Structure probing data (DMS and 2A3) for a 177-nucleotide construct. The reactions ran in a buffer of 150 mM KOAc, 10 mM MgCl2 and 150 mM bicine (pH 8.5), at 24 C. For DMS, 1,376 sequencing reads were counted. Source: RMDB library OK1LIB, as collected in RNAgym.
RNA sequence: GGGAACGACUCGAGUAGAGUCGAAAAUAUACAUCAGAAGUCGGCACAACUCCCGACUCGCGGUGAGCGAUGCAGCGUAGCGCGAGCUACGCAGCUGCUGUGCGGAUGGCUAGCCUCAGCUAGCCUACAGCUGACGAUACUUCGGUAUCGUCAGCUGAAAAGAAACAACAACAACAAC
Reactivity to DMS in 0.01 (KOAc 150mM, MgCl2 10mM, bicine 150mM(pH8.5), 24C), signal-to-noise 1, nucleotides 027 to 126: u000a100u040a140c010a020u020c080a090g030a150a080g010u000c030g000g000c170a100c000a210a070c210u050c100c020c040g000a100c040u000c040g010c260g000g070u000g100a060g000c020g020a010u000g000c010a040g010c000g000u000a010g000c040g000c300g000a080g010c000u000a000c010g000c010a000g000c010u000g030c010u000g000u010g000c040g080g010a040u000g000g000c000u000a040g010c000c120u110c140a100g000c000u010a000g010c000c000u010a100
Reactivity to 2A3 in 0.01 (KOAc 150mM, MgCl2 10mM, bicine 150mM(pH8.5), 24C), signal-to-noise 1, nucleotides 027 to 126: u110a000u020a000c020a040u120c010a090g000a130a000g080u030c000g000g090c130a010c060a300a240c140u020c000c000c000g020a020c000u000c000g000c060g020g050u030g000a060g030c020g050a060u180g000c000a000g030c010g020u000a000g010c000g000c000g060a040g000c000u000a000c000g000c000a000g000c000u060g010c030u030g010u030g070c140g010g010a110u050g000g000c000u000a000g000c000c030u150c020a030g040c050u000a000g000c000c000u020a020